[RMDB]
RNA sequence: GGGAACGACUCGAGUAGAGUCGAAAAGUGUGCUAUACUAGUAAGGUUGAAUGAAUCUACCCUUGGUGCUUAGCUUCUUUCACCAAGCAUAUUACACGCGGAUAACCGCCAAAGGAGAAAAGAUGAACUGCCCGACGAUUCUUCGGAAUCGUCGGAAGAGACCCAAUACGUUCGCGUAUUGGGUCUCAAAAGAAACAACAACAACAAC
Reactivity to 2A3 in 0.01 (KOAc 150mM, MgCl2 10mM, bicine 150mM(pH8.5), 24C), signal-to-noise 2, nucleotides 027 to 156: g030u020g010u030g000c020u040a030u020a280c070u140a140g080u160a050a020g040g010u020u050g030a060a060u040g000a070a060u090c000u050a030c040c040c000u030u060g000g040u040g000c040u040u030a040g050c000u040u060c040u030u080u010c010a020c060c020a060a010g010c020a060u030a020u160u120a020c090a000c060g000c020g000g020a020u040a290a130c010c010g050c070c010a090a010a010g100g010a030g040a050a090a060a010g070a040u150g070a080a020c050u180g000c000c000c000g000a000c000g000a000u000u000c000u050u100c230g000g030a000a000u000c000g000u000c000g000g000a000a000